[RMDB]
RNA sequence: GGGAACGACUCGAGUAGAGUCGAAAAUGGAUCUGCAACAACACCAUAUAUCCGCAGAUCCUAAGGAUGUAUGGCCAACUGAUCCGAGAGGAUCUACAUUAAGGCGAAGGUCAAAUCUUCGUUAAUACCGACCUGAAGCCGAAGGUAUUAACGAACACAUAGUCCUACUCUUCGGAGUAGGACUAUGAAAAGAAACAACAACAACAAC
Reactivity to 2A3 in 0.01 (KOAc 150mM, MgCl2 10mM, bicine 150mM(pH8.5), 24C), signal-to-noise 2, nucleotides 027 to 156: u100g000g000a000u010c010u060g030c010a060a030c020a030a050c010a190c090c100a060u170a030u060a040u140c100c040g060c010a010g010a030u000c000c010u040a080a030g020g010a020u030g020u100a020u040g050g000c020c010a030a090c110u130g000a000u000c000c000g000a000g000a010g040g000a010u000c030u030a020c050a130u130u150a100a050g050g000c030g030a030a030g000g000u000c010a000a030a140u080c100u080u010c040g000u000u000a010a000u000a000c000c020g020a040c020c000u140g050a040a000g020c030c020g000a000a020g010g010u000a000u000u000a000a000c000g010a030a030c140a000
Reactivity to DMS in 0.01 (KOAc 150mM, MgCl2 10mM, bicine 150mM(pH8.5), 24C), signal-to-noise 2, nucleotides 027 to 156: u010g020g000a030u000c020u000g000c030a200a170c110a110a140c090a070c020c030a060u040a200u000a040u000c020c070g010c010a100g000a070u020c030c030u000a040a040g030g020a080u000g000u000a060u000g040g020c040c060a180a150c120u010g020a020u000c000c000g010a300g020a300g010g010a000u000c010u000a040c120a180u000u010a110a110g030g030c040g020a140a070g020g020u000c020a060a090a220u000c070u000u000c000g010u000u000a010a020u000a020c000c000g000a170c040c050u000g000a090a160g090c000c000g000a100a300g000g010u000a020u000u020a010a030c000g020a020a020c120a160
Structure probing data (2A3 and DMS) for a 207-nucleotide construct. DMS adducts were read by reverse transcription with MarathonRT. Conditions: 150 mM KOAc, 10 mM MgCl2 and 150 mM bicine (pH 8.5), 24 C.